[RMDB]
Overview:
An RNA of 177 nucleotides, treated with DMS and 2A3 and read out base by base.
RNA sequence: GGGAACGACUCGAGUAGAGUCGAAAAACAGGAUGGAUGACAGUCAAUUAUUUAGUCGAGGAUAACAAAUUGAUAGUGAUGGGAGCUGGCACAUUUUACGAGACGUCAGUAUUAGUGAAUAUGCACCGUGACAUGGGAAUUUCGAUUCCCAUGUCACAAAAGAAACAACAACAACAAC
Reactivity to DMS in 0.01 (KOAc 150mM, MgCl2 10mM, bicine 150mM(pH8.5), 24C), signal-to-noise 2, nucleotides 027 to 126: a150c110a160g000g000a020u010g000g020a030u030g020a130c120a170g030u020c050a080a100u000u000a080u000u000u000a060g010u000c100g000a130g000g000a080u020a110a090c150a020a070a050u030u000g000a040u010a020g020u000g000a040u000g010g010g000a030g020c040u000g000g010c000a110c050a010u000u030u000u030a100c090g010a080g000a040c050g000u000c070a020g000u010a060u000u020a060g010u000g010a050a000u030a020u030g000c040a040c120c110
Reactivity to 2A3 in 0.01 (KOAc 150mM, MgCl2 10mM, bicine 150mM(pH8.5), 24C), signal-to-noise 3, nucleotides 027 to 126: a000c020a010g040g000a050u030g040g000a020u050g040a030c050a060g070u090c020a010a020u100u040a060u070u200u210a120g080u050c100g040a070g050g020a100u050a180a030c080a050a050a010u050u070g030a060u050a130g080u060g010a020u090g080g000g000a060g020c010u000g010g000c010a030c040a120u080u200u150u100a030c160g000a010g050a050c050g050u000c030a010g030u040a020u070u100a050g070u040g020a030a030u120a090u240g070c020a000c090c070

Record summary:
The DMS profile rests on 2,134 reads. For 2A3 the reverse transcriptase was SuperScript II with manganese. Conditions: 150 mM KOAc, 10 mM MgCl2 and 150 mM bicine (pH 8.5), 24 C.